[RMDB]
RNA sequence: GGGAACGACUCGAGUAGAGUCGAAAAUAUGUCCACAUUCGAUUCAACCACAGUUUACGACGCAACGACGCAUUGGUUCAGUAACCGUUGAUAAUUUGAAUAACGGACGUUAUCAAGGCGAAAUGCAGAGUGACAUGGGAUUCGUCCCAUGUCACUCAAAAGAAACAACAACAACAAC
Reactivity to DMS in 0.01 (KOAc 150mM, MgCl2 10mM, bicine 150mM(pH8.5), 24C), signal-to-noise 1, nucleotides 027 to 126: u000a060u040g020u000c000c010a140c170a130u000u000c000g000a020u000u000c020a080a120c000c200a090c140a020g020u000u000u000a010c130g000a200c060g000c080a050a100c190g000a230c070g000c080a110u000u000g000g000u000u000c060a130g060u000a010a010c030c020g050u000u000g000a020u080a010a030u000u000u000g000a060a100u050a000a020c060g020g000a030c140g040u000u000a010u000c060a060a000g000g000c010g000a070a040a000u050g000c050a170
Reactivity to 2A3 in 0.01 (KOAc 150mM, MgCl2 10mM, bicine 150mM(pH8.5), 24C), signal-to-noise 3, nucleotides 027 to 126: u230a010u050g060u000c000c000a010c040a180u050u070c010g120a040u030u040c040a080a030c040c010a010c030a090g060u020u050u080a060c070g040a040c030g020c070a100a060c220g140a040c020g000c090a030u030u010g070g030u120u050c040a060g030u020a070a140c000c030g010u000u000g040a050u030a140a260u040u100u210g170a090a070u100a040a000c090g000g010a010c000g030u020u040a050u040c020a020a000g060g000c040g110a030a050a000u160g050c070a030